Notes
Conditions: 150 mM KOAc, 10 mM MgCl2 and 150 mM bicine (pH 8.5), 24 C. Chemical mapping of a 207-nucleotide RNA with DMS and 2A3. The DMS profile rests on 1,293 reads. It was measured as part of the RMDB library OK3TST.
[RMDB]
RNA sequence: GGGAACGACUCGAGUAGAGUCGAAAAAUACAACAAUUUUGUCAGAACGAGAGUUAAAUCAAUUGCGGACGUAUUCCAACAGACGCUUACGAAAGGCUUGAUUCAGAGUCCACAUUGGUACUUUAAAUGCAACUCAAAGAGCUUGAUGGCUUACGACCGGAGUCGUAGUAUUCGUACUACGACUCCGAAAAGAAACAACAACAACAAC
Reactivity to DMS in 0.01 (KOAc 150mM, MgCl2 10mM, bicine 150mM(pH8.5), 24C), signal-to-noise 1, nucleotides 027 to 156: a050u000a110c050a060a110c020a050a140u000u000u000u020g010u020c060a220g030a130a040c020g000a290g050a140g050u000u000a050a100a080u010c080a050a130u000u000g010c000g050g030a130c050g040u010a080u020u000c070c080a020a110c110a130g020a030c040g020c060u010u010a180c020g030a040a000a190g000g040c010u040u000g050a050u010u070c050a100g000a080g010u000c040c030a110c070a180u010u000g030g030u000a050c080u000u030u000a060a050a060u040g000c020a060a050c030u000c000a200a100a060g000a100g020c070u010u000g040a100u000g000g010c030u000u000a010c030g030a140c130
Reactivity to 2A3 in 0.01 (KOAc 150mM, MgCl2 10mM, bicine 150mM(pH8.5), 24C), signal-to-noise 2, nucleotides 027 to 156: a000u110a030c030a040a010c040a070a060u090u080u140u170g060u050c070a040g010a170a080c070g020a030g000a020g090u040u130a080a160a080u080c030a020a050u100u110g010c040g000g000a010c030g030u040a070u130u080c060c000a040a040c010a070g150a060c070g040c010u060u110a050c060g100a120a030a010g050g000c000u040u080g010a000u060u120c040a060g020a010g120u030c030c020a030c040a060u060u100g030g000u060a050c010u030u080u120a050a080a000u100g010c000a020a030c020u000c070a070a080a060g030a020g000c000u070u100g030a050u090g050g000c020u030u070a040c060g130a000c000